[RMDB]
RNA sequence: GGGAACGACUCGAGUAGAGUCGAAAACAAGGAGUUCCACCCAGAAGGUUCUCUGUAGACCGAUCUUGUCUUGAGAGUCUCUUCCAGUACCAAUGUCCAAGGAAGCAGGCUGGCCAGUCGGAUGCCACUAAAUCACAUGGUUCGCCAUGUGAUUUAGAAAAGAAACAACAACAACAAC
Reactivity to DMS in 0.01 (KOAc 150mM, MgCl2 10mM, bicine 150mM(pH8.5), 24C), signal-to-noise 6, nucleotides 027 to 126: c090a110a100g010g010a100g020u000u010c030c040a140c060c060c060a170g010a100a070g010g000u000u010c020u000c040u010g000u000a080g000a080c030c100g010a060u020c080u010u000g010u000c050u010u000g010a130g010a060g010u000c000u000c020u000u000c000c040a120g020u000a090c080c150a080a120u000g010u000c060c080a080a150g010g010a030a030g020c170a040g020g000c020u010g010g010c020c050a070g010u000c050g000g000a110u010g010c030c070a200
Reactivity to 2A3 in 0.01 (KOAc 150mM, MgCl2 10mM, bicine 150mM(pH8.5), 24C), signal-to-noise 4, nucleotides 027 to 126: c050a010a060g060g010a040g050u050u030c030c010a070c040c010c020a090g060a200a060g070g000u030u010c010u000c010u070g110u120a030g060a090c020c010g040a050u050c040u060u090g050u000c030u090u220g150a210g010a010g060u000c000u000c000u040u020c000c010a010g030u050a080c020c080a160a150u210g040u010c050c030a080a090g020g010a010a020g000c070a010g020g000c020u040g010g000c030c000a020g010u020c000g010g030a040u100g040c000c020a060